[RMDB]
RNA sequence: GGGAACGACUCGAGUAGAGUCGAAAAGAUAUGGAGGUCGACGAUCCAGAGUACAGUGUCGGAAACGACACUAGUACGACGAAGGAUUAGACCUCCUAAGUCAAACGCCUGACUUCGGUCAGGCGAACUGUUGAAGAUUCUUCGGAAUCUUCAACAGAAAAGAAACAACAACAACAAC
Reactivity to DMS in 0.01 (KOAc 150mM, MgCl2 10mM, bicine 150mM(pH8.5), 24C), signal-to-noise 2, nucleotides 027 to 126: g000a010u000a250u010g000g010a010g010g000u000c010g010a190c300g000a060u000c000c000a100g000a130g020u000a010c010a030g010u010g000u000c000g010g000a040a050a070c010g000a050c000a000c000u000a030g010u000a000c000g010a190c190g010a110a090g010g020a030u000u000a190g000a000c000c000u000c000c000u000a000a050g000u010c020a100a090a230c040g000c000c010u010g000a010c000u010u000c150g040g010u000c020a000g000g030c000g010a010a010
Reactivity to 2A3 in 0.01 (KOAc 150mM, MgCl2 10mM, bicine 150mM(pH8.5), 24C), signal-to-noise 1, nucleotides 027 to 126: g000a000u000a010u090g000g000a000g010g000u010c030g040a140c200g050a050u010c020c040a080g020a000g160u000a000c000a000g010u000g000u000c020g040g030a030a020a010c000g000a000c000a010c000u030a010g000u000a000c010g000a020c060g100a220a100g000g000a020u030u070a030g000a010c000c000u000c000c000u010a000a010g000u000c000a020a090a070c040g020c000c010u000g010a020c000u030u100c300g080g000u000c000a000g000g000c010g000a010a010